[RMDB]
Chemical mapping of a 177-nucleotide RNA with DMS and 2A3.
For 2A3 the reverse transcriptase was SuperScript II with manganese.
Reactivities are rounded to 0.1 and cut off at 0 and 3.
RNA sequence: GGGAACGACUCGAGUAGAGUCGAAAAUUGACUGACUGACUGACUGACCUUACCGAUUCAUUCAUUCAUGCGUGCCUGUCUGCUUGCUUUCUUCAUCCUAAUUCAUGGCUGCAUGGGCAGAUCGAACCAUACCACUGCGGUUCGCCGCAGUGGUAUGAAAAGAAACAACAACAACAAC
Reactivity to DMS in 0.01 (KOAc 150mM, MgCl2 10mM, bicine 150mM(pH8.5), 24C), signal-to-noise 3, nucleotides 027 to 126: u010u010g000a090c020u000g020a100c090u010g000a050c080u010g000a110c040u010g000a050c060c040u000u000a100c090c050g020a120u000u010c090a060u000u010c060a080u000u010c050a070u020g010c120g010u000g010c040c020u000g010u000c050u000g010c040u000u000g000c050u000u000u000c080u000u010c090a090u000c030c020u000a060a100u020u010c110a070u020g020g000c030u000g000c020a070u010g010g010g020c050a060g010a090u010c080g010a060a090c200
Reactivity to 2A3 in 0.01 (KOAc 150mM, MgCl2 10mM, bicine 150mM(pH8.5), 24C), signal-to-noise 2, nucleotides 027 to 126: u040u060g060a030c030u020g000a040c000u020g000a000c000u010g000a030c010u020g070a070c010c020u030u070a090c060c050g070a070u040u050c020a030u100u020c000a030u060u030c020a020u130g060c030g050u050g040c010c010u060g000u100c010u000g050c000u030u030g010c000u110u100u050c040u000u050c010a050u030c020c000u040a080a040u110u100c080a010u100g070g000c000u010g050c040a060u110g010g060g000c010a030g040a060u090c030g020a000a020c000